Description
This 177-nucleotide RNA was probed chemically with 2A3. The 2A3 profile rests on 739 reads. The data come from the RNA Mapping Database (RMDB), library OK1LIB. Conditions: 150 mM KOAc, 10 mM MgCl2 and 150 mM bicine (pH 8.5), 24 C. 2A3 adducts were read by reverse transcription with SuperScript II with manganese.
[RMDB]
RNA sequence: GGGAACGACUCGAGUAGAGUCGAAAACUGCGAACGACGACUCUCCGGUCACAAUAAUACUGUUCGGUGCCUCUGCCAGUACGCUGGGGAUACCGGAGCUGUCCUCUUCUCUGGAAGCGAUGAUGGCGGAUCGCUCGACGUUCGCGUCGAGCGAUCCAAAAGAAACAACAACAACAAC
Reactivity to 2A3 in 0.01 (KOAc 150mM, MgCl2 10mM, bicine 150mM(pH8.5), 24C), signal-to-noise 2, nucleotides 027 to 126: c020u030g000c050g010a060a000c020g080a020c030g000a010c020u010c030u000c040c000g060g020u050c060a010c060a050a010u170a080a110u170a100c080u180g090u110u020c000g000g040u020g030c000c000u000c000u090g030c020c030a210g160u270a070c150g020c050u060g020g030g010g000a020u050a010c000c020g070g000a000g030c000u050g010u050c020c050u100c030u060u010c070u000c000u070g000g120a110a040g000c000g040a050u110g020a050u010g110g000c000